[RMDB]
RNA sequence: GGGAACGACUCGAGUAGAGUCGAAAACUUUGUCAAGCAUGUAGACUGGACAGUCACAUACCCCUUUAUUGCCAAUGAGGCGGCAGUUAAUAAGAGUGGUCGUGUUGUGCAACGCCAUGUGAUGCACCAUAUUAGUCGAGUUCGCUCGACUAAUAUGAAAAGAAACAACAACAACAAC
Reactivity to DMS in 0.01 (KOAc 150mM, MgCl2 10mM, bicine 150mM(pH8.5), 24C), signal-to-noise 9, nucleotides 027 to 126: c060u000u010u010g020u010c070a100a190g010c050a040u000g010u010a090g010a090c040u000g000g010a080c100a050g010u000c030a030c040a070u010a150c030c010c020c030u000u000u000a030u010u000g020c020c030a080a140u010g010a100g020g020c130g000g010c020a030g010u010u000a060a070u000a050a070g010a060g020u000g010g010u000c190g010u000g010u000u000g010u000g010c030a040a070c090g010c080c050a040u000g010u000g000a130u000g000c050a080c170
Reactivity to 2A3 in 0.01 (KOAc 150mM, MgCl2 10mM, bicine 150mM(pH8.5), 24C), signal-to-noise 7, nucleotides 027 to 126: c010u110u080u130g080u110c050a050a020g010c020a030u050g030u110a040g030a120c010u030g030g030a030c020a050g040u140c020a030c000a050u190a070c000c020c000c000u020u100u050a100u080u060g010c020c010a070a100u180g030a060g130g060c020g010g000c000a010g010u030u090a100a060u090a200a020g080a010g050u110g020g020u040c050g010u020g020u040u060g010u030g030c020a040a010c050g020c050c010a020u070g040u040g050a060u120g020c010a020c000
The record gives the reactivity of an RNA of 177 nucleotides to DMS and 2A3.
The reactions ran in a buffer of 150 mM KOAc, 10 mM MgCl2 and 150 mM bicine (pH 8.5), at 24 C.
It was measured as part of the RMDB library OK2TST.